[RMDB]
RNA sequence: GGGAACGACUCGAGUAGAGUCGAAAAGAUAUGGAUCUGUCUUUCGUGCGUACAUGUGCAACAGCCAUUCACUCGGAAACGAGUGAUGGACAUGCACGUGUACGCACGAAAGACAGAUCCUAAGUCACUUACAUGUGAGGUUCGCCUCACAUGUAAGAAAAGAAACAACAACAACAAC
Reactivity to DMS in 0.01 (KOAc 150mM, MgCl2 10mM, bicine 150mM(pH8.5), 24C), signal-to-noise 1, nucleotides 027 to 126: g000a040u010a300u020g000g000a000u000c000u000g030u010c000u000u000u000c000g010u010g000c030g000u000a020c000a010u000g030u010g000c000a020a080c280a270g000c020c000a030u010u000c010a000c010u010c000g000g000a140a080a260c010g000a030g010u010g020a010u010g000g020a050c160a160u000g020c010a000c010g020u000g000u000a000c010g000c000a000c000g020a000a000a000g010a010c000a000g000a000u000c020c000u010a020a090g000u010c040a300
Structure probing data (DMS) for a 177-nucleotide construct.